[RMDB]
RNA sequence: GGGAACGACUCGAGUAGAGUCGAAAAUGGGCUACCAGUAAGCGAAAAAUGAUACAGGACGAAAAAAACAUAAUCCGAGAUUUUUCAGGAUGGAUUUUUUUAGGUAUCUAUCAAAACUAUUCUGAUGCAACGUAGAGCACGUUCGCGUGCUCUACAAGAUGGAUACGACGUUCGCGUCGUAUCCAUCAAAAGAAACAACAACAACAAC
Reactivity to 2A3 in 0.01 (KOAc 150mM, MgCl2 10mM, bicine 150mM(pH8.5), 24C), signal-to-noise 1, nucleotides 027 to 156: u010g030g040g020c010u010a040c010c000a000g040u060a020a010g030c060g050a080a020a040a060a020u100g010a030u030a100c040a050g040g080a030c050g040a030a030a030a000a000a050a030c040a030u100a060a040u000c000c030g030a030g010a160u100u260u110u130u050c010a030g000g000a010u000g030g000a030u020u000u000u000u000u020u140a000g020g020u080a050u120c000u030a010u040c020a030a060a010a030c030u030a050u140u090c000u010g020a010u040g060c060a040a080c060g020u000a000g000a000g000c000a000c010g000u010u030c080g020c000g020u000g000c010u000c010u000a000c000a020a010